[RMDB]
RNA sequence: GGGAACGACUCGAGUAGAGUCGAAAAGGACAAUUCGUUGUCCAAUAUAGAUAUGGAAAUCUCGAUUCAUCGAUCAUAUGUGAAGAAGUCGGAAACGAUGUAAAGCAUAUGGGAGAAUCGUGAUUUCCUAAGUCACCAAUGGGGAUUCGUCCCCAAAAAAUUCUGGUAGAUUCGUCUACCAGAAUUUAAAAGAAACAACAACAACAAC
Reactivity to 2A3 in 0.01 (KOAc 150mM, MgCl2 10mM, bicine 150mM(pH8.5), 24C), signal-to-noise 3, nucleotides 027 to 156: g000g000a000c000a000a030u070u070c260g050u150u020g000u020c000c010a000a000u150a040u080a040g010a000u060a010u130g000g010a010a010a010u030c030u000c020g000a000u020u000c040a180u250c210g070a020u050c020a000u010a010u000g010u010g010a100a300g030a020a000g040u010c020g000g040a030a080a050c040g010a000u080g000u020a010a020a000g000c000a000u000a010u000g000g020g010a050g000a000a000u000c000g000u000g010a000u000u000u000c000c000u000a000a000g000u000c020a010c050c020a000a110u110g000g000g000g000a000u010u050c080g040u040c010c070c070c120a000a040a020
Reactivity to DMS in 0.01 (KOAc 150mM, MgCl2 10mM, bicine 150mM(pH8.5), 24C), signal-to-noise 2, nucleotides 027 to 156: g010g000a010c020a000a060u000u020c300g040u010u000g000u010c000c030a090a120u010a180u000a100g040a090u000a240u010g000g000a030a020a010u020c010u000c020g020a030u000u000c010a300u010c090g020a120u000c000a010u000a000u000g010u010g000a080a070g010a120a300g010u000c020g000g000a060a090a180c000g000a010u010g000u000a110a120a300g020c000a000u000a030u000g000g000g000a080g010a000a020u000c000g000u000g000a020u000u000u000c010c010u000a010a030g000u000c000a110c040c060a170a130u000g000g010g060g000a130u000u000c130g000u000c000c020c000c000a020a000a060
The record gives the reactivity of an RNA of 207 nucleotides to 2A3 and DMS. 2A3 adducts were read by reverse transcription with SuperScript II with manganese. The RNA was probed in 150 mM KOAc, 10 mM MgCl2 and 150 mM bicine (pH 8.5) at 24 C. For DMS, 2,459 sequencing reads were counted.